[RMDB]
RNA sequence: GGGAACGACUCGAGUAGAGUCGAAAAGGGGUCAGAGCUUUUGACGUCGGAGUACGUAGAGCGAAGAACGAUACUGAAGCCUCCACGGUAUCGGGAGCUCUAUGAAACGACGAUAAGCUCUGACGGAGGCACCCAAAGGUCUAGUUCGCUAGACCAAGAGCGAUAUUUACUUCGGUAAAUAUCGCUCAAAAGAAACAACAACAACAAC
Reactivity to 2A3 in 0.01 (KOAc 150mM, MgCl2 10mM, bicine 150mM(pH8.5), 24C), signal-to-noise 2, nucleotides 027 to 156: g080g010g020g000u010c000a000g000a020g000c040u070u180u260u300g230a220c190g000u020c010g010g020a010g060u030a010c100g000u010a020g010a000g000c000g050a160a000g000a020a030c020g010a000u000a000c000u050g020a070a000g000c000c000u000c000c000a010c010g000g000u010a000u010c010g000g000g000a010g010c000u000c010u000a010u030g000a030a000a000c010g000a000c010g030a040u020a090a000g010c010u000c010u020g000a000c000g000g000a000g020g000c000a010c010c000c000a080a080a010g000g000u000c000u000a010g030u040u080c260g000c060u000a000g010a020c000c000a010a030